[RMDB]
RNA sequence: GGGAACGACUCGAGUAGAGUCGAAAAUCGCGCUUGUCGUCCGGCCGUCACGGCAGCCGGGCCAACGCGCAUAGAUAAUCUGGUCGCACCGCUGCCCCACAAGGGCACCGACAGGCGCAUCACAGAUCAUACGGAGCAAGUUCGCUUGCUCCGUAUGAAAAGAAACAACAACAACAAC
Reactivity to DMS in 0.01 (KOAc 150mM, MgCl2 10mM, bicine 150mM(pH8.5), 24C), signal-to-noise 3, nucleotides 027 to 126: u020c150g000c020g040c020u000u000g030u010c180g000u000c040c110g000g000c020c010g050u030c130a100c250g000g040c030a080g030c030c010g000g020g060c040c100a020a060c150g000c000g000c020a240u060a030g000a050u000a070a130u020c020u020g030g000u010c000g000c040a090c100c020g020c180u000g000c000c000c000c000a200c300a120a300g000g000g000c000a000c160c080g000a130c150a060g010g020c000g150c040a100u000c130a150c090a010g000a110u000
Reactivity to 2A3 in 0.01 (KOAc 150mM, MgCl2 10mM, bicine 150mM(pH8.5), 24C), signal-to-noise 4, nucleotides 027 to 126: u100c030g000c000g000c020u010u020g040u060c030g010u030c010c010g030g000c010c000g110u120c070a030c130g090g020c020a000g010c030c010g000g000g010c030c020a030a020c120g000c000g000c010a000u080a030g100a060u130a080a110u050c020u030g050g000u080c030g000c020a040c010c020g000c010u010g010c010c000c000c000a120c030a070a060g030g000g000c010a010c000c000g020a030c010a040g070g020c000g000c000a000u080c030a030c010a030g050a010u000